RNA sequence: GGGAACGACUCGAGUAGAGUCGAAAAGAUAUGGACCUAUCGACGGAGCGAGGAUCUCGGAAACGAGGGAGCUCCCGUCGAGUAGGUCCUAAGUCAAAAGGACCGGCAGGUUCGCCUGCCGGUCCAAGAUGACUAAUCUCUUCGGAGAUUAGUCAUCAAAAGAAACAACAACAACAAC
Reactivity to DMS in 0.01 (KOAc 150mM, MgCl2 10mM, bicine 150mM(pH8.5), 24C), signal-to-noise 2, nucleotides 027 to 126: g010a030u010a300u000g000g000a010c000c000u000a020u000c000g010a020c000g020g000a030g000c000g020a110g010g000a030u000c000u000c010g000g000a110a120a230c000g000a040g000g000g000a050g000c000u000c110c030c040g020u000c000g000a020g000u000a010g000g000u000c010c010u000a000a070g000u010c030a060a080a140a210g000g010a030c000c000g000g000c000a010g000g010u010u020c230g000c000c000u000g000c000c010g000g000u000c010c010a000a020